[RMDB]
Annotation:
Chemical mapping of a 177-nucleotide RNA with 2A3 and DMS. The data come from the RNA Mapping Database (RMDB), library M2PK50. Conditions: 150 mM KOAc, 10 mM MgCl2 and 150 mM bicine (pH 8.5), 24 C.
RNA sequence: GGGAACGACUCGAGUAGAGUCGAAAAUGGUGCCCGUUCGCGGGCACCACCUCGUGGUUAGGGCCACGUUAAAUAGUUGCUUAAGCCCUAAGCCUUGAUAAAGAUGCGCGAAAUUCGUUUCGCGCAAGCCCCUACUACUAUUCGUAGUAGUAGGGGCAAAAGAAACAACAACAACAAC
Reactivity to 2A3 in 0.01 (KOAc 150mM, MgCl2 10mM, bicine 150mM(pH8.5), 24C), signal-to-noise 2, nucleotides 027 to 126: u060g000g000u000g000c020c020c000g000u030u020c220g010c040g000g040g000c020a000c010c000a000c000c000u020c000g010u000g000g000u020u010a000g000g000g030c000c010a000c010g000u000u000a010a010a010u140a030g050u070u140g010c030u060u110a080a030g020c000c000c020u010a030a010g000c020c040u160u130g020a100u160a220a130a040g100a130u150g000c020g010c010g010a000a000a020u060u060c150g020u050u010u000c000g000c010g000c020a000a000
Reactivity to DMS in 0.01 (KOAc 150mM, MgCl2 10mM, bicine 150mM(pH8.5), 24C), signal-to-noise 2, nucleotides 027 to 126: u000g010g040u000g010c010c010c010g000u010u030c230g010c010g000g000g000c010a010c000c010a020c000c010u000c010g040u000g000g000u000u000a030g010g000g000c000c000a020c040g010u000u020a010a030a040u000a030g010u010u020g000c150u020u000a090a130g030c000c000c000u000a010a060g020c120c090u010u000g010a120u020a130a100a070g010a180u000g020c000g000c000g000a010a010a070u000u010c270g000u000u000u000c010g000c010g000c000a010a010
Reactivities are given for positions 27 through 126. For DMS, 1,948 sequencing reads were counted. The 2A3 profile rests on 1,749 reads.